[RMDB]
RNA sequence: GGGAACGACUCGAGUAGAGUCGAAAAAUCAAGAGAGGUCAAAACUAAAAGAGCUCGUGUGGAAACCUUGCCUGGGGUGGAAGCAUUAAAACUAAUCAGGAUAGUUUGUCAGUGGCGUGUCCAUCCGCAGCUGGCCGGCGAAUGUAAUGAUUGGACUUACGUUAUCUACGUUCGCGUAGAUAACGUAAAAAGAAACAACAACAACAAC
Reactivity to 2A3 in 0.01 (KOAc 150mM, MgCl2 10mM, bicine 150mM(pH8.5), 24C), signal-to-noise 1, nucleotides 027 to 156: a000u070c010a050a010g040a010g000a020g050g080u040c030a010a070a120a230c150u180a210a150a040a110g030a020g100c020u020c170g010u030g010u020g010g040a080a080a020c020c020u060u030g010c000c020u020g000g000g010g020u010g020g020a030a000g020c000a040u100u150a020a000a040a040c110u080a070a080u250c020a010g000g000a000u000a020g000u020u000u010g020u040c000a010g000u020g070g010c010g020u010g000u000c010c010a010u010c030c000g000c010a000g000c000u030g000g040c000c050g030g010c000g000a030a000u070g070u130a030a010u070g020a010u010u180g010g010a000c010u020
Conditions: 150 mM KOAc, 10 mM MgCl2 and 150 mM bicine (pH 8.5), 24 C. The record gives the reactivity of an RNA of 207 nucleotides to 2A3. Reactivities are given for positions 27 through 156. 2A3 adducts were read by reverse transcription with SuperScript II with manganese.